The data come from the RNA Mapping Database (RMDB), library RFM100. Chemical mapping of a 177-nucleotide RNA with 2A3. The reactions ran in a buffer of 150 mM KOAc, 10 mM MgCl2 and 150 mM bicine (pH 8.5), at 24 C. For 2A3 the reverse transcriptase was SuperScript II with manganese.

[RMDB]
RNA sequence: GGGAACGACUCGAGUAGAGUCGAAAACCAAGCAAGAAACGCUUGAGAUAGCGAAGCUUAGCAGAUGAGUGAAUGAAGCGGGAGGUAACGUUCCGAUCUCGCGCCGUCUUUGCUUGGACUGAAGGGUUUCUUGGUUUGGUUUCGACCAAACCAAGAAAAAAGAAACAACAACAACAAC
Reactivity to 2A3 in 0.01 (KOAc 150mM, MgCl2 10mM, bicine 150mM(pH8.5), 24C), signal-to-noise 1, nucleotides 027 to 126: c000c000a010a000g000c000a000a060g020a080a030a000c130g030c050u090u070g070a030g050a060u070a000g060c000g040a090a000g000c020u060u040a010g010c030a010g070a190u130g010a040g210u100g080a050a070u100g000a130a000g020c000g000g050g030a000g000g000u100a060a030c140g100u080u050c000c010g010a020u000c000u000c000g250c000g000c030c000g170u100c030u050u120u100g010c030u000u040g070g080a040c000u030g080a040a040g020g000g070u000